[RMDB]
RNA sequence: GGGAACGACUCGAGUAGAGUCGAAAAUGCCCAGUGAUGACACCAUCCUUGCUCCCCGUGCCCCCCAGGGGCUAUGGGCGACACCAUGGCUGCCCCUGGGCUGGGCCAGUGGGGCCAAUGCCCAGGGCUAUCGUACGCGUUUCGACGCGUACGAUAGAAAAGAAACAACAACAACAAC
Reactivity to DMS in 0.01 (KOAc 150mM, MgCl2 10mM, bicine 150mM(pH8.5), 24C), signal-to-noise 4, nucleotides 027 to 126: u020g000c010c010c030a080g010u010g010a070u010g000a120c090a100c130c020a050u000c020c040u000u010g000c050u000c000c010c000c300g020u010g000c010c000c000c010c070c060a050g000g010g020g000c020u010a010u000g000g010g040c100g000a100c170a080c060c010a020u010g000g020c130u010g000c070c000c000c010u000g010g000g000c080u040g020g000g030c000c000a060g010u050g010g000g020g000c040c120a030a070u010g020c000c000c000a050g010g000g010
Reactivity to 2A3 in 0.01 (KOAc 150mM, MgCl2 10mM, bicine 150mM(pH8.5), 24C), signal-to-noise 4, nucleotides 027 to 126: u140g050c000c000c000a030g070u090g100a090u080g040a030c030a030c080c000a030u030c020c010u040u060g000c010u050c000c020c000c040g080u180g010c000c000c000c010c000c020a030g000g000g010g000c000u030a020u020g010g000g040c040g110a030c040a040c040c010a020u040g120g030c070u100g040c020c000c000c010u000g000g000g000c020u060g000g000g000c000c000a010g020u070g020g080g000g000c000c010a030a030u080g010c000c010c000a010g020g010g000